Chemical mapping of a 207-nucleotide RNA with 2A3. It was measured as part of the RMDB library OK3TST. For 2A3, 1,312 sequencing reads were counted. Conditions: 150 mM KOAc, 10 mM MgCl2 and 150 mM bicine (pH 8.5), 24 C.
RNA sequence: GGGAACGACUCGAGUAGAGUCGAAAACUGGGCCUUCAUAGGGUUGAUUGCCCACCGUCUGGAGCACACAUGUCUUACCAAGCCCUGCAGUGUGUUUCCAUCACUCGCUCACCCUGGCUGAUUGCUGCGGGGCCAUCAGUGGAAUGCAGGGGCCGGACCCUGCUACCAUAUUCGUAUGGUAGCAGGGAAAAGAAACAACAACAACAAC
Reactivity to 2A3 in 0.01 (KOAc 150mM, MgCl2 10mM, bicine 150mM(pH8.5), 24C), signal-to-noise 3, nucleotides 027 to 156: c030u000g000g000g030c010c010u060u050c040a130u100a140g050g050g170u090u080g010a060u010u130g020c010c020c000a110c050c020g100u080c050u050g040g030a010g020c000a000c000a010c020a110u120g040u050c040u110u110a170c060c060a160a040g020c010c000c000u000g020c010a030g010u000g000u000g000u130u300u060c010c000a030u060c000a040c050u110c050g070c000u030c000a080c000c010c000u000g040g000c010u020g040a070u060u220g000c010u050g070c030g070g060g030g000c030c000a030u060c010a010g020u030g000g100a090a040u140g010c010a000g020g010g000g020c050c060g050g040a080